An RNA of 177 nucleotides, treated with DMS and 2A3 and read out base by base. For 2A3 the reverse transcriptase was SuperScript II with manganese. The data come from the RNA Mapping Database (RMDB), library OK2TRN. The RNA was probed in 150 mM KOAc, 10 mM MgCl2 and 150 mM bicine (pH 8.5) at 24 C.

RNA sequence: GGGAACGACUCGAGUAGAGUCGAAAAGAAACAUGGUGACCAGAUAUACGAAUAAACUCUUUGUUCCAUGCUCUGGGUUUAUGGGGUUCUCUAUCUGGAGAUGGAUUGUGAUGGAAGGAAACCUCUGAUAAAUAACAUGGUUCGCCAUGUUAUUUAUAAAAGAAACAACAACAACAAC
Reactivity to DMS in 0.01 (KOAc 150mM, MgCl2 10mM, bicine 150mM(pH8.5), 24C), signal-to-noise 9, nucleotides 027 to 126: g010a130a090a080c070a060u010g010g030u000g010a220c020c030a030g010a140u010a040u000a090c130g010a130a040u000a040a050a060c060u000c070u000u000u000g000u000u010c090c100a070u000g010c020u000c030u000g010g010g010u000u000u010a030u010g010g010g000g000u000u000c040u000c030u000a040u000c030u000g000g010a100g000a080u000g000g000a100u010u010g010u000g010a090u000g000g010a160a140g010g000a060a100a060c040c040u000c080u000g000
Reactivity to 2A3 in 0.01 (KOAc 150mM, MgCl2 10mM, bicine 150mM(pH8.5), 24C), signal-to-noise 3, nucleotides 027 to 126: g030a000a060a010c020a060u050g040g030u040g030a030c000c010a010g040a020u060a020u030a070c070g070a090a030u120a070a090a030c030u060c030u130u090u110g030u140u100c070c020a030u110g060c010u000c010u020g000g000g040u050u070u030a070u080g020g020g040g050u210u020c050u010c010u050a060u060c010u030g080g020a030g040a040u070g050g010a050u100u080g070u080g040a050u070g010g040a030a000g020g030a080a000a010c000c000u000c030u040g030